Annotation
Chemical mapping of a 177-nucleotide RNA with DMS. For DMS, 1,032 sequencing reads were counted.
[RMDB]
RNA sequence: GGGAACGACUCGAGUAGAGUCGAAAAGAUAUGGAGGCAGUAGCUAAGACAGUACAGCGCAUUUAUAUGCCAGUCGGAAACGACUGGCAUAUAUUCAACUGUAUCGAGCUAUUUGCCUCCUAAGUCAUCCUUAGACGUAGUUCGCUACGUCUAAGGAAAAAGAAACAACAACAACAAC
Reactivity to DMS in 0.01 (KOAc 150mM, MgCl2 10mM, bicine 150mM(pH8.5), 24C), signal-to-noise 2, nucleotides 027 to 126: g000a020u000a300u020g000g010a000g010g050c010a000g010u010a000g020c000u010a170a130g030a100c300a140g010u000a000c000a020g000c010g000c300a220u000u000u000a000u020a010u000g000c000c000a000g010u000c010g030g000a060a030a260c000g010a040c010u000g000g020c010a010u000a000u010a000u000u000c300a130a100c040u000g040u030a030u010c060g010a030g010c000u010a000u000u010u010g010c010c020u000c000c000u010a010a150g010u000c010a130